[RMDB]
RNA sequence: GGGAACGACUCGAGUAGAGUCGAAAAAGCGAAUAUCUGUCGAAGCCAACUCACCUCCUGCUUGAUGGCUUUGCGAUAGCACCCGCCGCGUGGCGACGGGUUGGUGACCGACAGGCGGUGGUCGACGGUCGGCACUAGCCUUCGGGCUAGUGCCGACAAAAGAAACAACAACAACAAC
Reactivity to DMS in 0.01 (KOAc 150mM, MgCl2 10mM, bicine 150mM(pH8.5), 24C), signal-to-noise 1, nucleotides 027 to 126: a080g000c080g010a230a150u010a040u020c000u000g010u020c030g010a110a300g000c010c000a020a090c110u000c020a110c050c020u030c080c020u000g000c030u000u060g000a160u000g010g000c050u000u020u010g000c050g000a060u000a060g050c080a050c220c050c020g020c010c020g020c060g040u020g060g020c050g030a040c050g000g000g000u000u010g010g030u000g020a110c110c000g000a000c040a000g010g020c140g010g000u000g010g060u000c010g020a100c120g010

The record gives the reactivity of an RNA of 177 nucleotides to DMS. Source: RMDB library OK2TST, as collected in RNAgym. For DMS, 789 sequencing reads were counted. The RNA was probed in 150 mM KOAc, 10 mM MgCl2 and 150 mM bicine (pH 8.5) at 24 C. Values cover nucleotides 27 to 126.